[RMDB]
RNA sequence: GGGAACGACUCGAGUAGAGUCGAAAAAGCACUUGGUAAAUGCAGACCCUUGGCUGCUGCCCAGGAACCUUUCUUAGGGGAGGUAGCUGAGUCCACCUGGGGCAGUCCAGGAGCUACGUGGAGAGCAAGGCUGCGCCCCACAUGUGGCUGCCACAUGACAAGCGAAUGCAUUCGUGCAUUCGCUUGUAAAAGAAACAACAACAACAAC
Reactivity to 2A3 in 0.01 (KOAc 150mM, MgCl2 10mM, bicine 150mM(pH8.5), 24C), signal-to-noise 1, nucleotides 027 to 156: a000g080c070a070c120u070u080g050g060u180a130a090a000u070g010c030a020g000a200c000c010c000u020u020g020g000c000u000g000c000u170g070c020c000c000a020g040g010a080a060c020c010u010u040u010c060u210u220a090g000g000g120g000a000g000g010u060a030g020c080u070g120a020g170u020c090c030a080c030c020u000g000g080g010g030c000a000g000u000c000c000a010g020g020a000g010c050u090a070c020g040u050g010g060a250g020a000g130c000a020a010g030g000c030u000g010c020g020c060c000c040c000a060c000a030u070g010u010g000g210c120u070g080c020c020a060c010a020u030g030